[RMDB]
RNA sequence: GGGAACGACUCGAGUAGAGUCGAAAAGGUUCACACCCCCAACCGGCGGGCCGGCUGCUCUUCUUUCCCUUCUCUCGUCUUCCUCGGUCAACCUCUUGAGUUCCCCUUCUUCCUCCUCGCUGAGGCGCAUAUCGCACUUCUUCGGAAGUGCGAUAUGAAAAGAAACAACAACAACAAC
Reactivity to DMS in 0.01 (KOAc 150mM, MgCl2 10mM, bicine 150mM(pH8.5), 24C), signal-to-noise 2, nucleotides 027 to 126: g000g010u000u010c070a060c100a270c040c020c000c010c020a120a090c080c040g000g020c070g020g000g010c050c040g020g040c070u000g010c020u000c020u030u010c040u000u010u000c040c000c020u000u010c030u000c020u000c040g010u000c050u000u010c030c010u000c050g000g010u000c030a050a160c040c010u000c020u000u000g010a140g010u000u000c000c020c010c160u000u000c070u000u000c020c010u000c010c030u030c140g020c090u000g010a060g020g010c300g030
The data come from the RNA Mapping Database (RMDB), library 15KREP. Chemical mapping of a 177-nucleotide RNA with DMS. The RNA was probed in 150 mM KOAc, 10 mM MgCl2 and 150 mM bicine (pH 8.5) at 24 C.